[RMDB]
RNA sequence: GGGAACGACUCGAGUAGAGUCGAAAACUAUAGGAUCGCUCUUGGCUAUUGUUGGAUUAAUUCCAGGGUAGGGGAAAACUCCAGUUUUUGAGCCGGACACGCACUCCUGCUUUUCAGGACCUUUUUAAUUUUGAUGUUUUCAACUUUUAGGCCCAGAGCCAUUAAUAUCAUUCGUGAUAUUAAUGGCAAAAGAAACAACAACAACAAC
Reactivity to DMS in 0.01 (KOAc 150mM, MgCl2 10mM, bicine 150mM(pH8.5), 24C), signal-to-noise 1, nucleotides 027 to 156: c020u000a120u010a170g000g020a020u000c040g010c040u000c000u010u000g010g030c020u000a060u000u000g000u000u000g000g020a130u000u000a120a210u010u000c040c040a140g000g000g020u000a080g040g020g000g010a050a080a090a060c070u000c020c020a090g030u000u000u000u020u010g000a100g000c020c000g020g000a070c130a060c040g040c080a160c030u000c010c000u010g010c030u010u010u010u000c050a140g040g000a060c010c000u010u000u000u020u020a020a150u000u000u000u000g000a090u000g010u010u000u010u000c030a070a120c100u020u000u020u010a070g000g030c000c010c010a120g010a250
Reactivity to 2A3 in 0.01 (KOAc 150mM, MgCl2 10mM, bicine 150mM(pH8.5), 24C), signal-to-noise 4, nucleotides 027 to 156: c040u070a050u140a300g060g070a070u080c050g000c040u020c020u050u100g020g000c000u020a040u040u120g060u010u020g010g010a030u090u080a090a090u250u050c040c040a030g080g000g000u040a010g010g030g010g030a020a030a050a020c050u040c030c010a040g020u000u020u010u100u240g050a020g000c030c020g000g000a020c040a020c120g020c010a030c030u000c000c000u010g020c000u110u080u110u140c050a030g020g010a060c010c000u100u130u060u060u210a120a130u120u180u150u120g060a060u060g080u090u040u030u060c010a030a010c010u030u080u050u140a060g020g010c010c030c020a020g030a000
Structure probing data (DMS and 2A3) for a 207-nucleotide construct.
Reactivities are given for positions 27 through 156.
Conditions: 150 mM KOAc, 10 mM MgCl2 and 150 mM bicine (pH 8.5), 24 C.
2A3 adducts were read by reverse transcription with SuperScript II with manganese.